[RMDB]
RNA sequence: GGGAACGACUCGAGUAGAGUCGAAAAUACUAUCUAGCUUAGAAUUUGGUCAUUUUUGAUAGUGUAGAUUGAAAUUUGACAAAUUUUAAUUGAAAUUAAAGUCUUAGUCUAGCUUGAAAUUUUGGAAGGUGAGUUUGGCUAGAUGAAUUUUUCACCUCUUAAAUCAUCUGUUCGCAGAUGAUUUAAGAAAAGAAACAACAACAACAAC
Reactivity to 2A3 in 0.01 (KOAc 150mM, MgCl2 10mM, bicine 150mM(pH8.5), 24C), signal-to-noise 2, nucleotides 027 to 156: u000a000c000u010a010u020c020u000a020g120c080u140u180a150g080a260a300u300u090u200g100g010u020c020a100u020u020u170u260u110g000a020u010a020g010u000g000u040a020g000a010u010u000g000a010a010a030u010u000u000g040a000c000a010a040a000u000u020u020u020a000a010u030u070g010a000a000a030u160u220a220a300a030g000u000c000u050u250a000g030u000c000u050a000g000c000u020u100g110a200a150a180u190u230u230u050g010g060a030a030g000g000u010g020a010g000u000u090u130g030g000c000u000a000g000a010u000g010a000a000u000u070u000u180u140c000a000c010c000u000
Notes:
Structure probing data (2A3) for a 207-nucleotide construct. The RNA was probed in 150 mM KOAc, 10 mM MgCl2 and 150 mM bicine (pH 8.5) at 24 C.